RNA sequence: GGGAACGACUCGAGUAGAGUCGAAAAUCGAGCAAUUGCAUACACACACUGUAGAAAAUCAAAAUUAACACCUGUGCGGUAAGACAGAAUGAUGGCAAUAAACAUGAGCACAUAACACAACAAACAGCCGUAGGUCUUCGUUCGCGAAGACCUACGGAAAAGAAACAACAACAACAAC
Reactivity to 2A3 in 0.01 (KOAc 150mM, MgCl2 10mM, bicine 150mM(pH8.5), 24C), signal-to-noise 1, nucleotides 027 to 126: u080c000g000a000g000c000a000a080u020u100g000c000a140u070a090c180a000c000a000c010a010c050u000g050u240a160g060a160a140a140a120u140c070a000a010a050a300u060u000a170a000c080a000c000c000u070g110u110g130c010g240g000u140a140a000g090a050c050a000g060a000a000u220g070a010u010g000g000c000a010a010u000a000a020a020c030a000u080g020a030g000c050a000c000a070u260a050a000c070a030c000a200a100c000a040a040a040c000a000g000
Chemical mapping of a 177-nucleotide RNA with 2A3.
It was measured as part of the RMDB library OK1LIB.
High 2A3 reactivity points to a flexible backbone, as in loops and unpaired stretches.
The 2A3 profile rests on 394 reads.